[RMDB]
This 177-nucleotide RNA was probed chemically with 2A3 and DMS. The reactions ran in a buffer of 150 mM KOAc, 10 mM MgCl2 and 150 mM bicine (pH 8.5), at 24 C.
RNA sequence: GGGAACGACUCGAGUAGAGUCGAAAAUUUAUGAUGAAGGUAUGGCUGUUGAGAUUAUUUGGUCGGGAUUGUAGUUUGAAGAUGUGCUCUUUUGAGCAGUCUCAACUUUGCUCGUUCCCGUUAUGGGGAACCAUCCCUAGUUCGCUAGGGAUGGUUCAAAAGAAACAACAACAACAAC
Reactivity to 2A3 in 0.01 (KOAc 150mM, MgCl2 10mM, bicine 150mM(pH8.5), 24C), signal-to-noise 1, nucleotides 027 to 126: u060u030u030a100u070g090a040u010g090a060a010g070g000u120a020u090g000g040c010u000g030u090u060g070a050g000a070u000u090a060u140u120u180g120g000u030c030g000g000g090a040u120u050g020u030a040g010u040u020u140g060a080a030g010a010u040g070u040g250c000u010c000u060u080u140u300g000a030g000c000a000g020u000c010u030c010a010a010c070u050u050u040g010c000u010c010g000u010u000c000c000c000g010u040u090a130u130g090g040g000
Reactivity to DMS in 0.01 (KOAc 150mM, MgCl2 10mM, bicine 150mM(pH8.5), 24C), signal-to-noise 1, nucleotides 027 to 126: u000u010u010a100u020g000a110u000g020a100a070g000g000u000a050u010g010g020c030u000g010u010u010g010a110g000a090u000u000a100u000u000u000g020g020u000c010g020g000g000a110u010u010g010u000a030g020u000u000u000g040a070a090g010a030u000g020u010g000c000u000c000u010u010u020u020g010a000g020c010a120g000u000c000u000c030a040a030c030u000u000u000g020c170u000c020g000u000u000c000c000c000g010u000u000a060u010g000g000g000